[RMDB]
RNA sequence: GGGAACGACUCGAGUAGAGUCGAAAAGAUCCUUCGUUCGCGAAGGAUCAAAAACCUUUGUGUCCGGCAGUGCCAGCGUUGUGGGACCCAUUGGGUCCCAUUACGCGGUAAUACUGCGGGACACUCUGGUAAAUCGCUCUGGGUUCGCCCAGAGCGAGGGACUAUAAGGAUUCGUCCUUAUAGUCCCAAAAGAAACAACAACAACAAC
Reactivity to 2A3 in 0.01 (KOAc 150mM, MgCl2 10mM, bicine 150mM(pH8.5), 24C), signal-to-noise 2, nucleotides 027 to 156: g010a000u030c000c000u000u000c000g030u010u070c200g010c010g140a000a000g000g000a000u000c000a010a010a000a000a000c000c010u000u020u000g000u000g000u000c010c060g200g000c000a010g010u000g030c050c070a160g010c030g000u020u020g000u000g000g000g020a000c000c000c070a190u200u300g050g000g000u000c000c000c000a000u000u020a000c010g000c000g000g000u000a020a010u050a020c000u010g020c050g010g000g000a000c000a000c000u000c000u000g010g000u030a120a110a050u030c010g010c000u000c000u020g000g030g060u060u070c220g100c040c000c000a000g010a000g000c000g010a000
Chemical mapping of a 207-nucleotide RNA with 2A3. 2A3 adducts were read by reverse transcription with SuperScript II with manganese. High 2A3 reactivity points to a flexible backbone, as in loops and unpaired stretches. It was measured as part of the RMDB library RNAMAK.